RNA sequence: GGGAACGACUCGAGUAGAGUCGAAAAAGGCGAACCAGCGGUUGUGUAUCGCCAUCUUCAGCAUCUUCUGGCCGCCAGCCAACCGGUUGUAGUGGCAAUUCUUCACGAUCAAAAGCCAAAUCACCGCACUGCUGUUAGGUUUCGACCUAACAGCAGUAAAAGAAACAACAACAACAAC
Reactivity to DMS in 0.01 (KOAc 150mM, MgCl2 10mM, bicine 150mM(pH8.5), 24C), signal-to-noise 2, nucleotides 027 to 126: a090g030g000c010g020a010a090c060c050a090g050c090g010g010u000u010g020u000g030u000a090u000c050g040c020c020a090u000c050u000u010c030a110g000c050a060u000c060u000u000c090u000g020g020c040c020g010c100c050a090g000c000c020a060a100c300c150g040g010u010u000g020u010a160g000u000g000g020c050a060a070u000u000c020u000u000c080a060c120g010a050u010c150a120a070a080a090g000c010c010a040a100a130u000c030a030c040c020g000c110
Reactivity to 2A3 in 0.01 (KOAc 150mM, MgCl2 10mM, bicine 150mM(pH8.5), 24C), signal-to-noise 1, nucleotides 027 to 126: a000g050g010c010g030a010a020c000c000a060g000c060g090g010u110u150g000u090g050u070a090u070c000g000c040c000a030u020c020u040u040c000a000g010c010a070u010c050u150u070c030u170g050g000c020c010g030c020c020a010g010c010c000a040a140c130c060g000g060u000u020g060u080a080g020u010g000g010c000a010a120u030u030c030u050u130c030a060c050g070a050u050c080a000a010a100a100g060c010c010a000a080a000u090c040a000c030c000g000c000